[RMDB]
RNA sequence: GGGAACGACUCGAGUAGAGUCGAAAAACAUCUAGACCAUGCCCUUAGCUCCACGAGUAGGAAUGUCUGAAAGUGCAUUCUGAAUGGGUGAUAAGAUUCAUCCAAGGCUAAAUAUAAGUUAGGAGAUUCAAUCGGAGAUAUUCGUAUCUCCGAUUGAAAAAGAAACAACAACAACAAC
Reactivity to DMS in 0.01 (KOAc 150mM, MgCl2 10mM, bicine 150mM(pH8.5), 24C), signal-to-noise 3, nucleotides 027 to 126: a220c090a080u010c060u000a130g050a120c080c070a030u010g010c030c010c020u040u000a060g040c010u010c050c040a080c300g010a070g010u000a180g000g010a010a000u000g010u000c110u020g030a100a130a170g030u050g020c010a000u010u010c010u010g000a070a120u010g020g010g000u000g000a050u030a110a070g020a090u030u000c010a000u010c010c020a060a110g000g000c020u000a020a100a030u000a050u060a050a100g000u000u030a140g000g000a060g000a140u000
Reactivity to 2A3 in 0.01 (KOAc 150mM, MgCl2 10mM, bicine 150mM(pH8.5), 24C), signal-to-noise 4, nucleotides 027 to 126: a010c050a060u090c050u080a050g090a090c010c010a080u140g030c020c010c000u060u040a020g000c000u020c060c020a100c070g010a020g020u010a000g020g000a040a010u010g030u030c050u120g160a140a050a050g150u130g060c000a000u010u000c010u000g060a120a060u080g000g020g010u000g000a010u050a090a180g130a090u060u020c000a010u010c010c010a020a000g050g000c020u030a030a100a020u200a090u040a100a020g110u080u070a060g010g060a070g010a040u010
An RNA of 177 nucleotides, treated with DMS and 2A3 and read out base by base. 2A3 adducts were read by reverse transcription with SuperScript II with manganese. Reactivities are given for positions 27 through 126. The RNA was probed in 150 mM KOAc, 10 mM MgCl2 and 150 mM bicine (pH 8.5) at 24 C. The data come from the RNA Mapping Database (RMDB), libraries RFM100 and RFMREP.